Description
Structure probing data (DMS and 2A3) for a 177-nucleotide construct.
RNA sequence: GGGAACGACUCGAGUAGAGUCGAAAAUUCGGAGUCAGGCCGCGCAGUUCAGUUGGGAAUCUUUUACGAAGCGGACCUCGAUUGUCCCCGUCCUGUUUCUUGUUUUCUGCCCGCUGUGUUGCGAUUGCUGGUAGGAUACUUUCGAGUAUCCUACCAGAAAAGAAACAACAACAACAAC
Reactivity to DMS in 0.01 (KOAc 150mM, MgCl2 10mM, bicine 150mM(pH8.5), 24C), signal-to-noise 3, nucleotides 027 to 126: u000u010c050g020g000a090g020u010c070a100g010g010c020c040g040c080g010c090a120g020u000u000c050a070g010u000u010g030g010g000a120a090u010c030u000u010u010u000a100c110g010a060a230g030c050g000g000a060c130c020u010c090g000a120u000u010g010u000c020c020c020c070g010u010c030c030u010g010u000u000u000c020u000u000g000u000u000u000u000c080u010g030c030c030c000g010c040u010g010u000g000u000u010g020c020g000a160u000u010g000
Reactivity to 2A3 in 0.01 (KOAc 150mM, MgCl2 10mM, bicine 150mM(pH8.5), 24C), signal-to-noise 2, nucleotides 027 to 126: u050u010c000g040g020a050g070u040c020a030g030g110c030c000g000c010g000c060a010g020u050u060c020a020g000u100u140g160g010g050a050a050u050c050u030u190u030u050a090c100g060a090a030g000c000g060g010a060c000c010u050c010g060a060u050u190g080u080c000c020c020c000g020u010c040c040u020g080u060u080u060c000u120u090g110u090u100u020u030c050u090g070c000c010c050g000c010u010g040u010g040u080u030g010c040g000a060u000u120g030

The 2A3 profile rests on 1,281 reads. The data come from the RNA Mapping Database (RMDB), library OK2TST. As a SHAPE reagent, 2A3 marks flexible, mostly unpaired nucleotides at the ribose 2'-OH. Conditions: 150 mM KOAc, 10 mM MgCl2 and 150 mM bicine (pH 8.5), 24 C.